Annotation
Structure probing data (2A3 and DMS) for a 177-nucleotide construct. The DMS profile rests on 1,769 reads. For 2A3, 4,169 sequencing reads were counted. Source: RMDB library RFMREP, as collected in RNAgym.

RNA sequence: GGGAACGACUCGAGUAGAGUCGAAAACCUACACUUCGGUGUAGGAAACUUGGCACCUAGUAAGCACUCAGUAAAUACUUGUUGAGUGCCUGCUAUGUGCCAGGCAAAACAUCACGUUCGCGUGAUGCUGAGAAACUUUGUUCGCAAAGUUUCUCAGAAAAGAAACAACAACAACAAC
Reactivity to 2A3 in 0.01 (KOAc 150mM, MgCl2 10mM, bicine 150mM(pH8.5), 24C), signal-to-noise 2, nucleotides 027 to 126: c000c000u030a020c010a000c000u060u100c240g070g000u010g000u010a000g030g000a080a050a000c010u010u000g000g000c000a000c010c000u000a010g000u010a020a010g000c010a000c000u010c010a010g020u070a020a090a120u260a300c190u080u070g010u020u020g010a000g010u000g020c000c000u000g000c000u010a010u000g000u000g000c000c000a000g000g010c020a050a100a030a030c000a000u000c000a000c030g030u090u060c240g000c020g090u000g000a000u000g030
Reactivity to DMS in 0.01 (KOAc 150mM, MgCl2 10mM, bicine 150mM(pH8.5), 24C), signal-to-noise 2, nucleotides 027 to 126: c000c000u010a000c000a030c000u000u010c120g030g020u000g000u000a000g010g010a010a020a070c010u000u000g000g020c000a000c020c060u000a000g010u000a020a030g010c000a000c000u010c000a030g030u000a030a050a220u010a140c260u000u010g000u000u000g020a020g000u000g000c000c030u000g010c000u000a010u000g000u010g000c000c010a000g000g030c170a100a060a070a260c020a000u000c000a010c010g000u000u010c270g050c030g030u000g000a000u000g000